[RMDB]
RNA sequence: GGGAACGACUCGAGUAGAGUCGAAAAGCUAUGGUGCAACUCUUUAAGGCAAUAACGAACUAAUUCUAAGCAAGUCAUGGAGAAAUGCCAGGGUCACUAUCUAGCCAUAAUAGUGCUUGACAGUAUGAGAAUCUGCUACCCUUCGGGGUAGCAGAAACACGUUUAAGAAGUUCGCUUCUUAAACGUGAAAAGAAACAACAACAACAAC
Reactivity to DMS in 0.01 (KOAc 150mM, MgCl2 10mM, bicine 150mM(pH8.5), 24C), signal-to-noise 3, nucleotides 027 to 156: g010c030u000a050u000g020g010u000g000c050a080a070c040u000c000u000u010u000a070a080g020g020c030a070a100u010a060a160c070g000a130a130c080u010a050a140u000u010c090u000a100a150g020c030a050a130g010u000c060a070u000g010g020a180g010a090a050a150u000g010c010c020a090g000g040g020u000c010a020c000u000a040u010c050u000a080g010c060c080a060u000a030a080u000a050g010u000g010c020u000u000g010a080c020a060g020u000a080u000g000a130g000a070a100u000c010u000g000c010u010a010c000c000c000u000u000c300g030g030g030g040u010a000g000c000a000g000a000a050a110
Reactivity to 2A3 in 0.01 (KOAc 150mM, MgCl2 10mM, bicine 150mM(pH8.5), 24C), signal-to-noise 4, nucleotides 027 to 156: g020c020u040a040u120g020g030u040g030c010a060a110c030u050c000u030u130u180a130a060g060g000c040a060a070u100a130a060c100g070a040a020c040u070a080a110u210u000c030u110a090a030g040c050a070a010g070u070c010a080u120g070g010a020g060a080a080a000u030g000c050c010a020g020g010g010u040c000a000c030u000a020u030c020u050a010g000c000c030a010u030a120a060u040a110g040u050g030c020u040u050g040a030c030a030g080u110a110u130g090a040g050a040a080u020c000u000g000c000u000a000c000c000c010u000u050c200g000g000g000g010u000a000g000c000a000g000a000a000a000
The record gives the reactivity of an RNA of 207 nucleotides to DMS and 2A3. It was measured as part of the RMDB library M2RFPK. Conditions: 150 mM KOAc, 10 mM MgCl2 and 150 mM bicine (pH 8.5), 24 C. For 2A3, 2,324 sequencing reads were counted. In probing experiments dimethyl sulfate is read out at A N1 and C N3, which are open when not base-paired. Values cover nucleotides 27 to 156.